[RMDB]
RNA sequence: GGGAACGACUCGAGUAGAGUCGAAAAUUCAAAUUGGUUAUUUUGCUGUUAAUUGGGAGACCUUACCAAUUUUGUAUUGUUUUCAGGGAAGCAGAAAGAGUGUUUUGGAAGGAAUCAUAGCCUUCUUCAGUGCACUAGAUAAGCAGCACAAUGAGGACGUACCACUGUAAUUCGUUACAGUGGUACGAAAAGAAACAACAACAACAAC
Reactivity to 2A3 in 0.01 (KOAc 150mM, MgCl2 10mM, bicine 150mM(pH8.5), 24C), signal-to-noise 4, nucleotides 027 to 156: u130u090c030a020a020a040u070u050g020g030u070u080a100u060u170u110u130g060c050u030g030u170u090a080a100u120u050g040g010g000a060g020a040c000c000u040u080a010c040c000a010a010u000u060u080u120g020u010a030u030u000g050u010u030u040u020c010a000g000g010g010a000a010g010c010a010g020a010a010a000g020a030g000u010g010u010u090u080u030g020g010a010a000g010g030a020a030u140c100a100u130a090g050c000c000u000u010c000u020u000c020a040g070u010g070c000a000c010u020a010g020a130u110a060a060g020c040a000g000c010a010c020a010a020u090g040a060g060g010a000
Reactivity to DMS in 0.01 (KOAc 150mM, MgCl2 10mM, bicine 150mM(pH8.5), 24C), signal-to-noise 4, nucleotides 027 to 156: u000u000c050a060a090a130u000u000g030g010u000u010a080u000u000u010u010g000c010u000g020u010u000a050a160u000u000g010g000g000a100g010a100c060c020u000u000a120c040c020a040a070u010u000u000u010g020u010a020u000u000g020u000u000u000u000c020a060g010g030g030a060a060g020c020a050g000a030a020a050g000a080g050u000g020u000u010u010u010g000g010a050a020g010g010a070a080u010c220a180u000a240g000c000c000u000u000c000u000u000c070a090g000u000g020c000a080c030u010a110g010a080u010a030a070g050c090a060g000c030a030c040a020a060u000g010a100g000g010a160